[RMDB]
This 177-nucleotide RNA was probed chemically with 2A3 and DMS.
RNA sequence: GGGAACGACUCGAGUAGAGUCGAAAAGGAGCAAGUAUCCGAGAUCUCUGCGGGAGGCCCACCAUAUGUGAAACAUUUGGACACCAUGGGAACCGUGGGUCGUGGGCAUUAGCACAUCUUAGCUCCAGGCAGCGGUCGCCUUCGGGCGAUUGCUGCCAAAAGAAACAACAACAACAAC
Reactivity to 2A3 in 0.01 (KOAc 150mM, MgCl2 10mM, bicine 150mM(pH8.5), 24C), signal-to-noise 4, nucleotides 027 to 126: g010g010a000g000c020a080a070g120u080a130u070c010c020g010a020g010a040u020c110u010c030u120g020c010g010g200g020a060g080g040c010c000c000a000c000c000a060u060a030u080g040u080g180a180a100a050c030a020u040u020u120g030g010a020c050a130c120c030a050u090g020g000g120a130a120c030c010g000u020g000g000g010u030c020g020u140g000g000g000c030a050u070u170a030g010c010a020c000a060u000c000u020u040a010g020c000u000c000c000a000
Reactivity to DMS in 0.01 (KOAc 150mM, MgCl2 10mM, bicine 150mM(pH8.5), 24C), signal-to-noise 1, nucleotides 027 to 126: g000g000a000g010c050a010a070g000u000a080u010c030c050g000a140g010a040u010c020u020c020u000g000c000g000g000g010a200g000g020c020c000c000a130c120c190a040u030a000u000g000u000g060a220a100a300c050a000u000u000u000g000g000a100c130a100c040c120a080u040g000g060g000a100a010c000c040g010u000g000g000g000u000c000g000u020g000g010g010c050a050u030u000a190g000c000a050c070a050u000c000u000u020a110g020c000u000c010c020a130
The RNA was probed in 150 mM KOAc, 10 mM MgCl2 and 150 mM bicine (pH 8.5) at 24 C.
DMS adducts were read by reverse transcription with MarathonRT.